[RMDB]
RNA sequence: GGGAACGACUCGAGUAGAGUCGAAAAACGGUGCGGAAGUUCGCGCUUCCGUGAAACGCGAAAAUCGGACGGUGGCUGCAAGUCGCAUCGCAAAACCGCGGAAAGUGGAGUUAGCGAGAGGAGGCUGAAACCAUCCAACACUUCGGUGUUGGAUGAACUAUAUUCUUUUGUUCGCAAAAGAAUAUAGAAAAGAAACAACAACAACAAC
Reactivity to 2A3 in 0.01 (KOAc 150mM, MgCl2 10mM, bicine 150mM(pH8.5), 24C), signal-to-noise 6, nucleotides 027 to 156: a000c030g020g020u050g000c010g000g020a050a030g040u100u160c050g020c030g000c050u020u000c000c010g010u030g030a090a070a020c100g010c030g060a070a030a010a080u120c050g020g020a020c030g030g020u030g020g020c060u100g000c070a030a050g020u030c020g010c050a040u020c010g000c010a040a070a010a040c030c030g010c040g070g080a190a110a050g030u060g020g020a050g020u070u070a030g030c040g030a020g010a030g050g030a020g000g000c010u030g030a080a000a020c030c000a000u000c000c000a000a000c000a000c000u030u090c200g080g000u000g000u000u000g000g000a000u000g000a000a000
Reactivity to DMS in 0.01 (KOAc 150mM, MgCl2 10mM, bicine 150mM(pH8.5), 24C), signal-to-noise 3, nucleotides 027 to 156: a030c010g010g020u000g010c000g000g010a040a080g020u000u000c170g030c180g000c010u000u000c000c080g010u000g010a050a080a040c020g000c020g000a030a050a110a090u000c030g020g000a080c040g020g000u000g000g020c020u020g020c040a080a070g020u000c030g000c020a210u000c030g020c030a060a050a080a090c020c020g000c020g030g000a050a050a130g000u000g000g010a140g010u000u000a140g020c030g010a070g010a100g020g000a060g020g020c010u000g000a120a050a130c110c000a020u000c010c000a020a010c000a010c000u000u010c270g050g000u000g000u000u000g010g020a020u000g000a030a080